[RMDB]
RNA sequence: GGGAACGACUCGAGUAGAGUCGAAAAGAUAUGGAGGGAAACGAGCUUGGAUUUAAGGGAUGGGAGGUGUAUAUCGGAAACGAUAUACUAACUCCCAUCCCUUUGUCAGCUCUAUCCCUCCUAAGUCCAUCUUCAGUGAGUUCGCUCACUGAAGAUGAAAAGAAACAACAACAACAAC
Reactivity to DMS in 0.01 (KOAc 150mM, MgCl2 10mM, bicine 150mM(pH8.5), 24C), signal-to-noise 2, nucleotides 027 to 126: g000a060u010a300u000g000g000a020g010g020g000a020a130a230c300g000a020g000c000u010u020g030g000a010u000u000u000a030a030g000g010g000a020u010g030g010g000a030g000g010u000g000u000a000u000a030u000c000g010g000a150a120a220c000g000a000u000a000u000a000c000u000a070a110c010u000c000c000c000a000u000c000c000c000u000u010u020g000u010c000a060g010c000u000c000u000a300u010c000c000c000u010c000c000u000a000a060g000u000c030

Conditions: 150 mM KOAc, 10 mM MgCl2 and 150 mM bicine (pH 8.5), 24 C. Chemical mapping of a 177-nucleotide RNA with DMS.